[RMDB]
RNA sequence: GGGAACGACUCGAGUAGAGUCGAAAAGAAAAAGCUUAGUUUUCCGAAAUAAGACCACAUCCAAGUUCGACAACUACAAGGAAGUGUUGUCUUAAGAUUUGUCGUCGACGGUGUCUAAGCGAAGAAAGGGAUUCAUAUAGUUCGCUAUAUGAAUCCCAAAAGAAACAACAACAACAAC
Reactivity to DMS in 0.01 (KOAc 150mM, MgCl2 10mM, bicine 150mM(pH8.5), 24C), signal-to-noise 4, nucleotides 027 to 126: g000a050a110a090a070a180g020c010u000u000a000g020u000u000u030u000c010c000g010a150a120a070u010a100a010g000a040c010c030a020c020a020u000c020c000a050a300g000u000u050c170g010a160c300a050a040c190u030a040c070a100a300g000g000a040a100g030u020g000u030u020g030u000c000u000u000a040a040g000a030u000u010u070g000u030c220g000u000c010g000a220c030g000g020u010g000u000c010u000a010a000g010c010g000a080a080g020a050a090a030
Reactivity to 2A3 in 0.01 (KOAc 150mM, MgCl2 10mM, bicine 150mM(pH8.5), 24C), signal-to-noise 5, nucleotides 027 to 126: g100a000a050a010a000a010g010c010u030u000a020g050u120u050u180u060c010c010g050a070a090a070u130a050a010g010a010c010c030a000c040a010u020c030c020a070a000g040u050u150c080g100a040c030a100a020c010u170a040c040a110a100g180g040a130a110g080u030g010u110u040g000u000c000u010u050a020a000g000a020u060u090u160g160u080c060g010u020c010g010a080c020g000g000u030g000u020c000u000a000a000g020c040g020a040a000g040a040a050a020
Source information: The record gives the reactivity of an RNA of 177 nucleotides to DMS and 2A3. For DMS, 4,666 sequencing reads were counted. Source: RMDB library OK1LIB, as collected in RNAgym. Reactivities are rounded to 0.1 and cut off at 0 and 3. 2A3 adducts were read by reverse transcription with SuperScript II with manganese.